[RMDB]
RNA sequence: GGGAACGACUCGAGUAGAGUCGAAAAUCCGGCGGCGCGUCGCCGGUUUGGGCUUCUCUCCUUUGCGCGGAGACGCAUGAGAACCUCGAUAAGCGCAAGCUUACCGAAACUCAUGUGCAGGCUUUGAUUCUCAUUAAGUCUUCGGACUUAAUGAGAAAAAAGAAACAACAACAACAAC
Reactivity to 2A3 in 0.01 (KOAc 150mM, MgCl2 10mM, bicine 150mM(pH8.5), 24C), signal-to-noise 4, nucleotides 027 to 126: u050c000c010g010g000c010g010g010c020g010c020g100u090c010g010c000c000g000g030u000u040u010g000g020g010c030u130u020c010u020c020u030c040c040u080u150u180g030c060g010c020g010g000a010g010a010c020g000c000a000u000g010a010g020a070a050c010c050u020c000g000a010u000a010a000g000c010g010c100a050a060g000c000u000u000a000c000c010g010a060a060a040c000u000c000a000u000g010u010g010c030a020g090g000c010u070u030u090g070a120
Reactivity to DMS in 0.01 (KOAc 150mM, MgCl2 10mM, bicine 150mM(pH8.5), 24C), signal-to-noise 5, nucleotides 027 to 126: u010c000c010g010g020c020g000g000c110g010c130g000u000c000g010c000c000g020g020u000u000u000g000g020g010c090u010u030c050u000c010u000c060c040u010u020u040g020c090g020c120g000g010a060g000a130c040g000c010a000u000g000a000g010a080a080c300c120u010c000g000a020u000a000a000g000c000g030c270a120a160g000c000u000u000a000c020c000g000a010a100a160c000u000c000a000u000g010u000g010c090a160g000g010c040u000u000u000g000a190